[RMDB]
RNA sequence: GGGAACGACUCGAGUAGAGUCGAAAAAACAGUUUUUUAGCUAAAGGAGCGAACGAAAUGGGAUUUUUAUCAAAAAUUCUUGAUGGCAAUAAUAAAGAAAUUAAACAGUUAGGUAAACUUGCUGAUAUACAAUGUGUAAUUUCGAUUACACAUUGUAAAAAGAAACAACAACAACAAC
Reactivity to 2A3 in 0.01 (KOAc 150mM, MgCl2 10mM, bicine 150mM(pH8.5), 24C), signal-to-noise 5, nucleotides 027 to 126: a000a010c100a050g010u080u010u020u030u070u080a050g000c020u120a160a000a040g080g010a090g040c030g020a020a020c040g040a040a060a100u120g030g000g000a010u020u010u020u050u110a200u170c090a140a040a010a020a040u100u030c020u020u080g040a060u060g020g010c020a040a030u090a160a020u190a080a120a040g120a070a140a040u170u200a070a130a020c000a000g000u020u060a030g030g050u100a130a100a110c010u000u030g000c010u030g040a010u040a020
Reactivity to DMS in 0.01 (KOAc 150mM, MgCl2 10mM, bicine 150mM(pH8.5), 24C), signal-to-noise 5, nucleotides 027 to 126: a060a040c110a110g010u010u010u000u010u010u010a120g020c070u010a080a100a090g000g010a070g010c040g010a060a060c170g000a050a060a040u020g000g000g000a030u000u020u010u000u020a080u050c080a030a020a060a030a050u010u000c000u020u010g010a080u010g010g010c040a050a030u010a050a050u040a090a040a050g000a070a050a080u020u020a050a040a130c060a040g010u000u010a030g000g000u020a060a050a070c050u000u000g010c010u010g000a110u020a150